An RNA of 177 nucleotides, treated with DMS and 2A3 and read out base by base. Values cover nucleotides 27 to 126. DMS adducts were read by reverse transcription with MarathonRT. Source: RMDB library TTRDES, as collected in RNAgym. The reactions ran in a buffer of 150 mM KOAc, 10 mM MgCl2 and 150 mM bicine (pH 8.5), at 24 C. 2A3 adducts were read by reverse transcription with SuperScript II with manganese.
RNA sequence: GGGAACGACUCGAGUAGAGUCGAAAAGAUAUGGAGCUCUCUACGGGAGUCAUCCUGGUCGGAAACGACCAGAAUGACAUCGAUCGUAGGAGCUCCUAAGUCAAAGCUUUCCGUUCGCGGAAAGCAAGAAGUUGUAAUAGUUCGCUAUUACAACUUCAAAAGAAACAACAACAACAAC
Reactivity to DMS in 0.01 (KOAc 150mM, MgCl2 10mM, bicine 150mM(pH8.5), 24C), signal-to-noise 4, nucleotides 027 to 126: g000a050u010a300u000g000g000a010g030c010u000c010u020c010u000a000c000g010g010g000a080g010u010c000a000u000c010c000u010g000g000u000c000g010g000a120a110a150c010g000a010c000c000a000g000a010a010u010g010a020c000a200u000c120g000a090u000c000g010u010a010g000g000a010g010c010u000c010c010u000a000a060g010u000c030a120a170a200g000c000u000u000u010c000c010g040u010u020c300g020c020g010g000a000a010a000g020c000a020a030
Reactivity to 2A3 in 0.01 (KOAc 150mM, MgCl2 10mM, bicine 150mM(pH8.5), 24C), signal-to-noise 3, nucleotides 027 to 126: g010a010u070a050u190g000g000a000g000c000u000c020u020c010u040a010c010g000g050g070a150g020u000c000a000u020c000c010u000g000g010u010c000g000g030a090a080a120c010g010a000c000c000a010g010a010a010u000g010a000c020a300u220c170g170a140u130c000g000u000a000g000g000a000g010c000u000c000c000u000a000a000g000u000c010a010a070a040g000c000u000u000u000c020c010g030u050u110c300g020c010g120g000a000a000a000g000c010a010a010